[RMDB]
RNA sequence: GGGAACGACUCGAGUAGAGUCGAAAAGAAAGAAAGAAACAACUCUGUAAAGUGAGGGAUUGCCUGGACCAGGUCGGCGGGCCUGCUCCAGUUUCCUUCGCUCUGCUCAACGGGCAGACCGCCACAAAAAACGCGUGGCUGUUCGCAGCCACGCGAAGGAUGAAGAUAGGUUCGCCUAUCUUCAUCCAAAAGAAACAACAACAACAAC
Reactivity to 2A3 in 0.01 (KOAc 150mM, MgCl2 10mM, bicine 150mM(pH8.5), 24C), signal-to-noise 1, nucleotides 027 to 156: g010a000a060a000g090a050a060a010g090a040a110a030c110a030a110c080u110c130u160g060u180a220a040a020g020u020g030a010g000g000g000a010u020u230g090c010c000u000g010g010a000c000c000a000g010g010u060c040g010g030c000g050g020g000c000c000u000g020c010u000c010c020a000g010u040u070u030c000c010u030u020c020g010c000u020c000u000g010c000u010c030a000a160c100g000g010g000c000a010g020a070c000c030g030c040c000a040c070a050a180a010a040a030a020c000g020c000g000u000g090g040c000u010g020u010u090c200g060c140a000g000c000c000a000c000g000c000g010a020a010

This 207-nucleotide RNA was probed chemically with 2A3. The data come from the RNA Mapping Database (RMDB), library M2RFPK. The RNA was probed in 150 mM KOAc, 10 mM MgCl2 and 150 mM bicine (pH 8.5) at 24 C.